Chemical mapping of a 177-nucleotide RNA with 2A3 and DMS.
The 2A3 profile rests on 17,310 reads.
Values are in units of 0.01, from 0 to 300, in steps of 10.

RNA sequence: GGGAACGACUCGAGUAGAGUCGAAAAGAUAUGGAGGUAGGGAGCUGUAUUCGGAAACGAAUAAACAGCAUCGAUCUACGACCUCCUAAGUCAAAGAAGUUAAGGUGCUUCGGCACCUUAACUUCAACAUACUUACGUAGUUCGCUACGUAAGUAUGAAAAGAAACAACAACAACAAC
Reactivity to 2A3 in 0.01 (KOAc 150mM, MgCl2 10mM, bicine 150mM(pH8.5), 24C), signal-to-noise 5, nucleotides 027 to 126: g010a000u050a010u110g000g000a010g040g010u040a030g030g020g020a040g010c010u010g000u020a020u010u010c000g020g040a030a030a020c010g010a010a010u110a120a300a000c010a010g010c020a020u270c030g030a040u000c020u050a090c090g180a070c000c000u000c000c000u020a050a010g010u020c040a090a060a160g010a000a010g010u010u000a010a010g000g000u020g020c020u050u170c260g060g000c000a000c000c000u000u010a000a000c000u000u000c000a000a000
Reactivity to DMS in 0.01 (KOAc 150mM, MgCl2 10mM, bicine 150mM(pH8.5), 24C), signal-to-noise 9, nucleotides 027 to 126: g010a030u000a190u010g000g000a020g010g010u000a050g000g000g010a030g030c000u000g020u000a060u000u000c000g020g000a040a050a090c000g010a010a010u000a060a100a100c010a010g010c010a230u000c160g000a110u010c030u000a080c130g020a150c120c000u000c000c000u000a020a090g000u000c020a110a100a100g000a010a010g000u000u000a000a010g000g010u000g010c000u000u010c220g020g010c000a000c000c000u000u000a000a000c000u000u000c000a050a170